RNA sequence: GGGAACGACUCGAGUAGAGUCGAAAACAUUCAUACAGUUUACACUGCUAUAUUCCAUUGAUAACAGGCUAGAUUUCAUUCCUUUGGAGAAUUCCUGGAUCCCAAUUGGUAUCUUCUAUUCUGCCCGGACGGUAUAACACUUCGGUGUUAUACCGUCAAAAGAAACAACAACAACAAC
Reactivity to DMS in 0.01 (KOAc 150mM, MgCl2 10mM, bicine 150mM(pH8.5), 24C), signal-to-noise 2, nucleotides 027 to 126: c110a080u010u000c090a080u000a100c100a020g020u010u010u000a130c110a120c040u000g000c070u010a060u010a100u010u010c050c030a080u010u000g020a100u000a080a150c090a040g010g040c160u000a060g010a090u010u000u000c090a080u010u010c020c030u000u000u010g030g020a080g000a060a060u000u000c020c040u000g000g010a100u000c020c020c060a040a060u000u000g000g020u000a040u000c060u000u000c020u010a100u000u000c070u000g000c020c020c030g020
Reactivity to 2A3 in 0.01 (KOAc 150mM, MgCl2 10mM, bicine 150mM(pH8.5), 24C), signal-to-noise 2, nucleotides 027 to 126: c020a050u100u150c010a010u040a100c020a020g010u050u170u090a120c120a020c010u050g060c060u060a020u060a070u280u000c050c040a040u060u120g060a060u080a110a020c010a010g030g000c060u060a020g010a120u040u090u070c030a030u050u080c020c000u040u060u120g010g000a090g040a040a090u070u040c010c010u080g050g030a020u000c000c000c000a030a090u090u060g070g010u060a060u070c000u030u000c020u040a080u060u020c020u100g020c010c020c000g050